[RMDB]
RNA sequence: GGGAACGACUCGAGUAGAGUCGAAAAGCAUCUUGGACUUUAAAGUUCUUGAUAAUGGUAUCAUUAGGGAUGUAAAUCCUGAUGAUAAGUGCUUUGCUAAUAAGCACCGGUCCUUCACACAAUGGUAUAACCCUGUGGUUCGCCACAGGGAAAAGAAACAACAACAACAAC
Reactivity to DMS in 0.01 (KOAc 150mM, MgCl2 10mM, bicine 150mM(pH8.5), 24C), signal-to-noise 4, nucleotides 027 to 129: g000c120a110u020c010u030u020g000g010a000c000u000u060u070a110a130a100g020u000u010c040u050u000g000a000u040a050a060u100g000g020u020a000u020c000a040u050u010a090g060g000g000a000u000g000u070a110a110a050u030c010c030u000g010a000u000g000a020u000a000a010g000u020g030c000u030u000u030g000c140u050a080a110u000a070a040g030c000a030c010c080g020g040u000c010c040u020u040c080a090c140a040c190a080a060u060g020g030u030a040u070a080a110
Reactivity to 2A3 in 0.01 (KOAc 150mM, MgCl2 10mM, bicine 150mM(pH8.5), 24C), signal-to-noise 9, nucleotides 027 to 129: g040c020a000u020c000u000u000g000g010a000c000u060u090u230a140a230a030g000u010u000c000u010u010g040a030u040a150a090u120g090g000u030a000u000c000a010u010u040a100g040g000g040a030u090g080u260a060a070a090u040c000c000u000g010a000u000g000a000u000a020a050g000u000g010c000u020u020u050g010c000u050a160a110u080a180a020g000c010a010c000c000g020g030u030c000c000u090u160c050a050c020a020c010a130a180u140g110g000u120a070u060a200a050
Source: RMDB library 15KLIB, as collected in RNAgym. This 170-nucleotide RNA was probed chemically with DMS and 2A3. For DMS, 25,036 sequencing reads were counted. For DMS the reverse transcriptase was MarathonRT. For 2A3, 29,977 sequencing reads were counted.